[RMDB]
RNA sequence: GGGAACGACUCGAGUAGAGUCGAAAAUAUGGGAACUGCUGGGUUCCUCGGAUGUCGAUCCCCUCUCCCGUUCGGGAAAAGGGGGACUCCGGAACUCCCUGCAGGUUGGGCACGAAGCCCCCACCGGACACAUAGUCCUUCGGGACUAUGAAAAGAAACAACAACAACAAC
Reactivity to 2A3 in 0.01 (KOAc 150mM, MgCl2 10mM, bicine 150mM(pH8.5), 24C), signal-to-noise 9, nucleotides 027 to 129: u270a060u070g020g010g020a040a050c020u020g020c030u060g020g020g010u030u020c010c010u000c020g010g010a070u250g020u050c050g070a220u180c010c000c000c000u010c000u010c000c010c010g150u300u300c210g010g000g000a020a060a020a010g010g000g010g010g000a010c000u000c000c000g000g020a010a010c060u100c020c010c010u010g000c000a010g020g000u050u070g030g000g000c050a040c240g160a110a020g020c020c000c000c000c000a030c010c010g050g030a010c020a000
Reactivity to DMS in 0.01 (KOAc 150mM, MgCl2 10mM, bicine 150mM(pH8.5), 24C), signal-to-noise 9, nucleotides 027 to 129: u070a070u050g010g000g050a070a110c010u010g010c030u010g010g000g020u000u020c080c040u010c040g000g010a040u070g020u010c030g010a150u060c000c000c000c000u030c190u000c020c010c020g060u080u060c210g000g000g030a020a010a090a040g000g000g000g000g000a020c000u000c010c020g000g020a010a040c120u030c000c030c040u000g030c010a040g010g010u030u030g010g010g000c070a130c120g040a150a150g010c020c000c020c010c000a070c020c010g020g050a130c190a180

The data come from the RNA Mapping Database (RMDB), library 15KLIB. Chemical mapping of a 170-nucleotide RNA with 2A3 and DMS. The RNA was probed in 150 mM KOAc, 10 mM MgCl2 and 150 mM bicine (pH 8.5) at 24 C. For DMS the reverse transcriptase was MarathonRT.